Structure probing data (DMS and 2A3) for a 177-nucleotide construct. Source: RMDB library OK1LIB, as collected in RNAgym. For DMS, 4,132 sequencing reads were counted. 2A3 is a SHAPE reagent: it acylates the 2'-hydroxyl of flexible nucleotides of all four kinds.
[RMDB]
RNA sequence: GGGAACGACUCGAGUAGAGUCGAAAAACAAAUACUCUGCGAGCUAAGUAUGCAAAGGAUCAUACUAGCGAGAACAUCCAGAAGCUUGAAUCAGCAAGGACUCAACUUAAAGAGUUUCAGAACCUUGCUUCCGGUAUCAAUUCGUUGAUACCGGAAGAAAAGAAACAACAACAACAAC
Reactivity to DMS in 0.01 (KOAc 150mM, MgCl2 10mM, bicine 150mM(pH8.5), 24C), signal-to-noise 3, nucleotides 027 to 126: a060c110a030a070a060u020a100c070u030c010u010g000c130g020a210g000c010u010a040a120g020u000a000u010g000c090a150a070a090g010g010a080u020c010a010u030a010c010u000a020g000c020g000a130g010a080a110c270a170u000c060c020a060g010a060a040g000c100u010u000g040a070a050u020c100a040g000c020a010a040g040g000a130c010u000c170a040a030c060u010u000a050a040a070g000a050g000u000u000u000c080a030g000a100a120c030c000u000u000g000
Reactivity to 2A3 in 0.01 (KOAc 150mM, MgCl2 10mM, bicine 150mM(pH8.5), 24C), signal-to-noise 5, nucleotides 027 to 126: a000c040a010a060a030u130a050c010u010c030u080g060c070g080a070g010c020u020a130a060g020u010a010u040g000c050a170a120a170g190g010a070u180c000a000u000a000c020u000a000g010c010g020a030g020a050a030c050a070u090c050c030a030g050a150a010g050c020u090u050g040a040a040u090c010a010g030c030a060a060g040g000a030c000u010c030a030a040c030u070u140a110a110a080g100a010g000u020u060u010c030a030g030a100a180c000c040u020u020g030